[RMDB]
RNA sequence: GGGAACGACUCGAGUAGAGUCGAAAAGAUUAGGGCGUUCUGCCCCAGUGGUACCAUUACCCUAUGCAAAGUCUGCAUGCAGGCAGGGUAGUGUGCUGCUCGGGCACAACUGGUCGAGAGCUGGGCCGCUCUCCUGAUGAGCCCAUGGCAGGGCGAAGAUCGUUUGGGCGUUCGCGCCCAAACGAUCAAAAGAAACAACAACAACAAC
Reactivity to 2A3 in 0.01 (KOAc 150mM, MgCl2 10mM, bicine 150mM(pH8.5), 24C), signal-to-noise 1, nucleotides 027 to 156: g070a010u070u080a010g000g000g000c040g010u160u020c040u020g000c000c000c000c000a000g000u030g000g000u040a030c130c000a000u000u010a000c000c020c020u040a080u100g100c070a020a040a160g090u090c040u030g050c090a100u070g070c020a010g110g000c000a000g000g000g000u000a000g000u020g000u000g000c000u000g000c000u000c030g010g010g000c000a020c050a040a030c000u070g050g000u040c010g010a030g000a000g050c000u070g000g160g020c010c060g000c030u000c000u060c000c020u140g010a110u120g030a010g030c040c030c060a010u060g010g020c070a020g080g000g040c000g020a040a000
The record gives the reactivity of an RNA of 207 nucleotides to 2A3. The reactions ran in a buffer of 150 mM KOAc, 10 mM MgCl2 and 150 mM bicine (pH 8.5), at 24 C. Values cover nucleotides 27 to 156.